RNA sequence: GGGAACGACUCGAGUAGAGUCGAAAAAUGUGCGCCUCAAAGGCAGGCAUGGCGGCUGGCACGGGUGGCGGCACCACGACGAAACUGUAGGACAUGUGACGCGGUGCUGCAGCGGCAUGUUCAGUGGAUAGGCUAUACUAUUCGUAGUAUAGCCUAUAAAAGAAACAACAACAACAAC
Reactivity to 2A3 in 0.01 (KOAc 150mM, MgCl2 10mM, bicine 150mM(pH8.5), 24C), signal-to-noise 8, nucleotides 027 to 126: a010u180g030u050g040c040g020c000c010u090c060a140a100a050g080g000c040a030g040g000c030a050u090g030g010c010g000g010c020u030g020g010c040a030c050g040g010g020u040g040g000c000g010g020c010a020c000c010a020c020g090a010c030g040a100a070a050c060u140g040u230a070g070g060a020c020a050u100g030u070g060a070c010g020c020g020g080u110g050c060u070g000c020a010g020c010g020g000c020a000u030g000u020u040c010a030g050u050g060g040
Reactivity to DMS in 0.01 (KOAc 150mM, MgCl2 10mM, bicine 150mM(pH8.5), 24C), signal-to-noise 9, nucleotides 027 to 126: a080u020g020u010g010c110g010c020c000u010c130a100a130a130g000g000c040a060g000g020c050a070u010g010g010c040g000g000c040u010g000g010c070a060c050g000g000g010u010g010g020c030g010g000c030a040c020c010a050c020g010a120c070g000a110a100a070c080u010g010u020a140g000g010a300c060a040u020g000u000g010a180c020g000c020g000g010u000g010c030u020g000c000a100g000c020g000g010c040a040u010g000u010u000c030a070g020u010g010g000